This 177-nucleotide RNA was probed chemically with 2A3.
The data come from the RNA Mapping Database (RMDB), library OK1LIB.
For 2A3, 590 sequencing reads were counted.
[RMDB]
RNA sequence: GGGAACGACUCGAGUAGAGUCGAAAAGCCGCUGUAGCUUUGUCAAGACGAAGCUUUCCACCCGGCGCAGGGAGGGGAGCCCUAACAGCGGCCCCUGCGUGGGUUGCUUCCGUCCAUUCAGUGCCUGUCGAGCAGUACGCUUCGGCGUACUGCUCGAAAAAGAAACAACAACAACAAC
Reactivity to 2A3 in 0.01 (KOAc 150mM, MgCl2 10mM, bicine 150mM(pH8.5), 24C), signal-to-noise 1, nucleotides 027 to 126: g020c000c020g000c000u030g050u000a030g000c050u100u050u110g150u120c060a120a080g080a060c030g000a000a000g020c000u030u030u080c020c000a040c060c020c000g060g030c010g020c050a020g010g040g010a120g000g120g020g020a000g000c050c000c000u150a230a100c040a010g000c000g000g040c000c010c010c010u030g000c000g010u090g000g000g000u030u120g030c020u050u030c070c110g000u050c010c070a080u000u080c010a080g070u000g040c020c010u080g030